[RMDB]
RNA sequence: GGGAACGACUCGAGUAGAGUCGAAAAGCAACUUAGGAUUUUAGGCUCCCCGUGCGUGUCUCGAACCAUGCCGGGCCAAACCCACGGGGACUGGCGGUCCCCGUGCGGUCAAAAUCAAACCGCUGGAAAAACAGUUCUAGCUUCGGCUAGAACUGAACGGUAUUAGUCACUUCGGUGACUAAUACCGAAAAGAAACAACAACAACAAC
Reactivity to 2A3 in 0.01 (KOAc 150mM, MgCl2 10mM, bicine 150mM(pH8.5), 24C), signal-to-noise 1, nucleotides 027 to 156: g030c000a020a200c140u110u130a130g090g050a150u210u120u040u070a050g060g000c030u120c030c050c000c040g050u150g060c030g010u030g040u060c100u060c300g090a050a040c020c000a020u020g010c000c000g000g020g010c020c000a040a030a010c000c030c000a000c020g010g010g000g010a000c000u000g020g000c000g020g000u000c010c000c000c000g000u000g000c040g030g000u020c010a010a010a000a130u080c030a060a080a120c000c010g030c040u090g040g000a100a130a000a000a000c000a000g000u000u000c010u000a000g020c000u050u070c200g100g000c000u000a000g000a000a000c000u000g000a000a000

Background
An RNA of 207 nucleotides, treated with 2A3 and read out base by base. Reactivities are rounded to 0.1 and cut off at 0 and 3. The reactions ran in a buffer of 150 mM KOAc, 10 mM MgCl2 and 150 mM bicine (pH 8.5), at 24 C. 2A3 is a SHAPE reagent: it acylates the 2'-hydroxyl of flexible nucleotides of all four kinds. It was measured as part of the RMDB library M2RFPK.